[RMDB]
This 207-nucleotide RNA was probed chemically with 2A3. The data come from the RNA Mapping Database (RMDB), library M2RFPK. The 2A3 profile rests on 508 reads. Reactivities are given for positions 27 through 156. The reactions ran in a buffer of 150 mM KOAc, 10 mM MgCl2 and 150 mM bicine (pH 8.5), at 24 C.
RNA sequence: GGGAACGACUCGAGUAGAGUCGAAAAAGAGCUUUGCGAGACCUACCAAGGGUGAAGAGAUACCAUCCGAGGAGCUGAAGAGAAAUCUCACUUUAGACGCCUGGGGAACUCGGACUAAAUUAAAAAAAAAACAUCAACCCGUUCGCGGGUUGAUGAACUAAUGUCUAACGUUCGCGUUAGACAUUAGAAAAGAAACAACAACAACAAC
Reactivity to 2A3 in 0.01 (KOAc 150mM, MgCl2 10mM, bicine 150mM(pH8.5), 24C), signal-to-noise 1, nucleotides 027 to 156: a020g100a020g000c080u120u070u090g020c040g080a060g050a160c000c020u020a060c090c070a100a080g070g010g000u050g030a120a090g010a010g020a070u110a110c010c030a000u000c010c010g000a000g060g000a000g010c030u060g050a060a030g060a010g070a090a080a080u030c000u010c020a040c020u070u040u000a140g030a180c070g050c070c090u070g000g040g000g030a050a070c010u000c090g030g030a010c030u080a030a110a160u300u230a170a150a040a010a000a000a000a000a040a090c010a000u000c000a000a000c010c000c000g020u040u020c140g000c000g050g000g040u000u000g000a000u000g000a000a000